This 177-nucleotide RNA was probed chemically with 2A3 and DMS.
The data come from the RNA Mapping Database (RMDB), library TTRDES.
Conditions: 150 mM KOAc, 10 mM MgCl2 and 150 mM bicine (pH 8.5), 24 C.
[RMDB]
RNA sequence: GGGAACGACUCGAGUAGAGUCGAAAAAAAAAAAAGAUAUGGAGAUGGAUCUUUGAUGACCGUACGUAACAUCACUCGGAAACGAGUGUGGUACGCAAGAAGCGCACAUCUCCUAAGUCAAAAAAAACAUACAAUAUUGCUUCGGCAAUAUUGUAUGAAAAGAAACAACAACAACAAC
Reactivity to 2A3 in 0.01 (KOAc 150mM, MgCl2 10mM, bicine 150mM(pH8.5), 24C), signal-to-noise 2, nucleotides 027 to 126: a030a010a020a010a020a000a140a140g010a050u140a040u120g000g000a010g000a010u020g000g020a060u070c030u050u060u070g250a300u190g050a170c060c040g000u060a030c030g050u070a110a040c040a130u300c000a000c000u040c020g030g050a060a080a020c010g010a000g020u000g010u000g060g040u000a000c010g000c000a160a190g030a030a010g060c050g000c130a040c020a160u000c000u020c000c000u040a120a020g010u060c050a080a060a000a000a060a030a030a000
Reactivity to DMS in 0.01 (KOAc 150mM, MgCl2 10mM, bicine 150mM(pH8.5), 24C), signal-to-noise 2, nucleotides 027 to 126: a000a000a000a030a030a050a030a160g000a020u030a300u000g010g000a030g010a030u000g000g010a170u010c010u000u000u000g010a110u000g000a120c300c050g030u000a020c000g000u020a050a070c120a030u000c030a010c020u010c000g010g030a120a030a140c020g010a020g060u010g030u000g000g010u000a000c010g020c020a060a130g000a020a000g040c220g000c300a210c000a020u000c000u000c000c000u000a020a120g010u020c030a020a000a000a060a050a050a080a190